[RMDB]
Structure probing data (DMS and 2A3) for a 207-nucleotide construct. 2A3 adducts were read by reverse transcription with SuperScript II with manganese. Source: RMDB library M2RFPK, as collected in RNAgym. Values cover nucleotides 27 to 156.
RNA sequence: GGGAACGACUCGAGUAGAGUCGAAAAGCCGAUGAAUUGCCGAGAAGCGUGGCUCGAAAUCGUCGACGCAUCGACGACGGUCCUGCCAUGAGACCGUAACGAGGACAUGUCGCCUCGAAUGGCGUCGUAUAACAUGAGUGGUUCGCCACUCAUGUAACACGGAUACUAUAUUCGUAUAGUAUCCGUGAAAAGAAACAACAACAACAAC
Reactivity to DMS in 0.01 (KOAc 150mM, MgCl2 10mM, bicine 150mM(pH8.5), 24C), signal-to-noise 4, nucleotides 027 to 156: g040c040c020g020a090u000g010a090a080u000u000g020c030c000g010a140g010a100a070g020c060g040u000g010g010c030u010c020g010a030a050a070u000c020g010u000c000g040a050c110g000c100a140u010c010g000a030c000g000a020c010g000g010u000c010c010u000g040c050c130a110u000g000a090g000a050c020c020g000u000a040a080c020g020a080g020g010a070c060a110u000g010u010c050g010c020c010u000c020g010a070a080u000g010g020c020g010u010c020g030u010a090u000a120a070c000a000u000g000a030g030u000g020g010u000u010c300g000c010c000a010c000u000c000a000u000g000u000a040a180
Reactivity to 2A3 in 0.01 (KOAc 150mM, MgCl2 10mM, bicine 150mM(pH8.5), 24C), signal-to-noise 9, nucleotides 027 to 156: g050c020c010g020a040u110g060a060a180u160u110g030c040c050g050a050g040a120a030g020c080g070u110g010g000c030u030c060g060a080a060a060u010c010g010u000c000g010a040c080g010c110a120u070c010g020a000c000g000a000c000g000g000u000c000c010u040g010c010c000a030u020g020a010g000a060c000c020g020u060a000a010c010g000a000g000g010a020c040a130u220g040u140c100g010c020c000u000c010g010a010a020u010g010g020c010g010u050c030g000u030a100u050a230a020c010a000u000g000a010g000u010g000g030u050u080c170g030c070c000a000c000u010c000a000u000g000u000a010a000
Source information:
DMS adducts were read by reverse transcription with MarathonRT.